[RMDB]
RNA sequence: GGGAACGACUCGAGUAGAGUCGAAAACGGCAUAGCGUAAUAGCCGACCAUCACGGGGAUCUUGUCAGGUCGGCAGGUAUAGCCAGCACGGGCCGAAAGUAGGCGCUUGGAAGAACUCCCGCCCAUGCGAAGUCAUACCGUUCGCGGUAUGACUUCGAAAAGAAACAACAACAACAAC
Reactivity to DMS in 0.01 (KOAc 150mM, MgCl2 10mM, bicine 150mM(pH8.5), 24C), signal-to-noise 2, nucleotides 027 to 126: c090g010g000c020a030u000a100g000c020g000u020a070a110u100a180g000c000c000g000a050c000c000a070u000c130a160c060g000g000g000g000a160u010c030u000u120g010u070c230a080g010g010u000c020g020g020c000a000g000g030u000a150u010a090g000c000c150a150g040c070a110c090g010g040g000c010c050g000a050a080a130g030u030a100g000g010c000g000c080u010u070g000g000a020a030g000a070a190c190u000c040c040c030g000c050c000c000a090u090g000
Reactivity to 2A3 in 0.01 (KOAc 150mM, MgCl2 10mM, bicine 150mM(pH8.5), 24C), signal-to-noise 2, nucleotides 027 to 126: c030g050g000c050a060u120a090g100c020g050u100a130a010u040a230g020c000c000g000a000c000c030a050u070c030a010c030g030g010g020g050a080u060c050u110u130g030u000c040a020g020g000u000c000g000g000c000a020g020g000u080a070u030a100g010c000c000a000g000c040a000c070g030g030g000c000c030g040a080a050a000g090u080a030g000g000c020g030c030u000u080g060g030a050a040g030a080a040c000u010c000c000c000g020c030c000c000a010u110g040